[RMDB]
RNA sequence: GGGAACGACUCGAGUAGAGUCGAAAAGUUGCUUUUGAGAGAGAUGUGAGUGGUUCGUAUUGCUGCGGGGUAAAAACUUUGUGUUUUUUCGUUUUAUUUGAUCUGUGCAGUAUGAGUAUUCCGCGGCGUGUAUUAUUAAUUUCGAUUAAUAAUACACAAAAGAAACAACAACAACAAC
Reactivity to 2A3 in 0.01 (KOAc 150mM, MgCl2 10mM, bicine 150mM(pH8.5), 24C), signal-to-noise 6, nucleotides 027 to 126: g040u050u060g030c030u070u060u120u140g070a070g000a000g000a010g000a040u100g050u040g050a040g020u040g050g010u050u080c030g010u080a060u070u200g010c030u020g000c010g020g020g000g020u050a040a050a020a020a010c040u110u100u100g050u030g070u080u030u000u020u050u100c040g010u070u010u050u090a120u120u120u110g040a060u030c040u040g050u060g030c020a010g010u100a040u080g010a030g010u020a020u030u000c000c010g030c010g040g020c030
Reactivity to DMS in 0.01 (KOAc 150mM, MgCl2 10mM, bicine 150mM(pH8.5), 24C), signal-to-noise 4, nucleotides 027 to 126: g000u020u010g000c060u010u010u010u010g000a110g010a130g000a080g020a040u020g000u030g000a080g030u010g000g000u010u000c040g020u020a050u020u010g010c030u010g020c010g000g000g020g010u020a030a040a030a070a040c050u010u020u020g010u010g000u000u000u010u000u010u010c060g010u020u020u010u020a070u030u040u020g000a050u010c040u010g000u010g000c020a040g000u010a020u010g000a080g000u000a050u010u010c010c000g010c050g000g010c090